[RMDB]
The data come from the RNA Mapping Database (RMDB), library 15KREP. An RNA of 177 nucleotides, treated with 2A3 and DMS and read out base by base.
RNA sequence: GGGAACGACUCGAGUAGAGUCGAAAACAAGGAGGGUAGUGUGAUCAAUUUCUGUUACAUGCAUCAAAUGGAACUUGCUAAUGGUACACAUACCGGUUCAGCAUUUGAUGGUACUAUGUAUGGUGCCGAGUGGUAUUUUGUUCGCAAAAUACCACUCAAAAGAAACAACAACAACAAC
Reactivity to 2A3 in 0.01 (KOAc 150mM, MgCl2 10mM, bicine 150mM(pH8.5), 24C), signal-to-noise 3, nucleotides 027 to 126: c050a020a040g080g020a050g000g000g070u040a040g010u030g010u030g070a050u050c040a060a090u020u110u000c030u030g060u040u050a030c010a020u060g020c000a040u000c000a020a010a040u030g000g020a010a010c000u040u080g010c020u130a120a030u070g030g010u130a070c130a000c010a120u050a020c010c000g030g000u010u030c020a090g010c000a060u040u020u060g030a040u030g000g020u030a030c020u060a020u080g090u040a020u110g010g000u040g060c030c020
Reactivity to DMS in 0.01 (KOAc 150mM, MgCl2 10mM, bicine 150mM(pH8.5), 24C), signal-to-noise 3, nucleotides 027 to 126: c080a100a080g010g000a090g010g000g000u010a010g040u010g020u000g020a070u010c090a070a050u000u000u000c040u010g020u000u000a030c030a040u000g020c040a030u000c030a030a040a040u010g010g000a010a030c040u000u000g030c140u000a080a060u000g020g010u000a090c170a100c120a050u010a050c120c110g000g000u010u000c040a100g010c040a060u000u000u010g010a060u000g000g000u000a040c070u000a030u000g020u000a040u010g000g020u010g010c090c100
For DMS, 2,946 sequencing reads were counted.